The data come from the RNA Mapping Database (RMDB), library OK1LIB. The record gives the reactivity of an RNA of 177 nucleotides to 2A3 and DMS. The DMS profile rests on 107,510 reads. Conditions: 150 mM KOAc, 10 mM MgCl2 and 150 mM bicine (pH 8.5), 24 C. High 2A3 reactivity points to a flexible backbone, as in loops and unpaired stretches. Reactivities are rounded to 0.1 and cut off at 0 and 3.
RNA sequence: GGGAACGACUCGAGUAGAGUCGAAAACUGCCGAUAGUCAGUGUGGAGGCCUGGUUUCGGGUCUAGUCUUUCGUUGAGAUCCGAAGAAGGGUGUACUUCAGACCGAAAGAUCUGAUGACUGUCGAGAGCGUCUGCGGUGCUUCGGCGUCGUGGGCGCAAAAGAAACAACAACAACAAC
Reactivity to 2A3 in 0.01 (KOAc 150mM, MgCl2 10mM, bicine 150mM(pH8.5), 24C), signal-to-noise 9, nucleotides 027 to 126: c010u030g020c010c000g000a000u000a000g000u000c010a000g020u020g060u060g160g160a040g030g060c000c000u050g030g040u030u030u020c000g000g010g000u000c000u010a040g040u010c050u030u200u110c090g100u040u120g080a010g000a010u000c000c000g000a010a000g020a020a020g020g000g000u040g030u040a030c000u010u010c000a000g010a010c000c020g080a060a040a020g030a070u000c010u030g030a030u020g000a020c000u000g000u000c010g010a030g010a010
Reactivity to DMS in 0.01 (KOAc 150mM, MgCl2 10mM, bicine 150mM(pH8.5), 24C), signal-to-noise 9, nucleotides 027 to 126: c020u000g010c080c000g000a010u010a010g010u000c000a030g010u020g020u000g000g010a110g000g000c000c000u010g000g020u020u010u000c010g000g010g000u000c000u000a050g010u040c130u020u040u050c230g020u030u040g010a030g000a010u000c000c010g000a020a020g010a160a150g000g000g010u000g000u030a080c020u010u010c000a010g000a020c030c010g000a120a090a140g000a110u000c010u000g000a050u010g010a010c010u000g010u000c000g000a110g000a130